[RMDB]
RNA sequence: GGGAACGACUCGAGUAGAGUCGAAAACUCUUUUCUUUUUGUGCAGCGGCGGGUGGGUUCCCAGGGUAAAACACAAUUGGUGUUUCCCGGUAACACCGUGCGGUUCCUGUGGUUCGCCCCGCCAAAGCAUAUAAUUAAAGAAAACGAGGAGAAGAAGGAGAUUAUACUACUUCGGUAGUAUAAUCUCAAAAGAAACAACAACAACAAC
Reactivity to 2A3 in 0.01 (KOAc 150mM, MgCl2 10mM, bicine 150mM(pH8.5), 24C), signal-to-noise 2, nucleotides 027 to 156: c010u020c000u010u050u010u000c020u100u150u020u030u090g020u020g050c060a020g000c020g160g020c100g050g100g080u220g050g140g000u050u090c020c030c060a020g040g000g030u060a030a040a020a030c020a010c020a100a290u170u170g050g040u000g020u000u050u160c000c050c000g020g000u000a010a000c010a000c030c040g100u090g080c020g050g000u010u040c020c010u090g020u170g090g000u000u060c000g090c020c000c000c020g000c000c010a000a000a000g010c000a000u000a000u000a020a020u070u120a050a020a000g000a020a020a000a000c100g000a010g030g080a050g040a130a020g020a070a050g110